[RMDB]
RNA sequence: GGGAACGACUCGAGUAGAGUCGAAAACAGGUAGCCCAGACCUUCAAGGCUACGGUGCGUUGCGACGCACGGUCUGAUUCUUCACAACGACGUUCACCGCGUCUUCUUCCAUCCCCCUGAGGCAGUGUAUAACCAGCAGCCUUCGGGCUGCUGGUAAACCUAAGCUAAGGUUCGCCUUAGCUUAGGUAAAAGAAACAACAACAACAAC
Reactivity to DMS in 0.01 (KOAc 150mM, MgCl2 10mM, bicine 150mM(pH8.5), 24C), signal-to-noise 2, nucleotides 027 to 156: c050a060g060g020u000a050g040c010c000c140a120g040a070c010c020u070u000c030a090a260g010g000c000u010a030c010g020g020u010g020c060g030u000u010g030c140g000a180c010g030c000a030c030g010g010u000c030u010g000a230u010u000c050u010u000c050a110c070a060a120c000g020a100c000g020u000u020c070a100c060c020g000c040g000u000c040u000u010c000u020u000c020c020a100u000c020c010c010c000c010u010g010a100g030g040c060a050g000u000g040u010a080u000a070a080c000c000a000g010c010a020g020c010c000u000u000c300g000g000g040c000u010g000c000u010g000g000u010a000a030

This 207-nucleotide RNA was probed chemically with DMS. In probing experiments dimethyl sulfate is read out at A N1 and C N3, which are open when not base-paired. The RNA was probed in 150 mM KOAc, 10 mM MgCl2 and 150 mM bicine (pH 8.5) at 24 C. The DMS profile rests on 3,814 reads.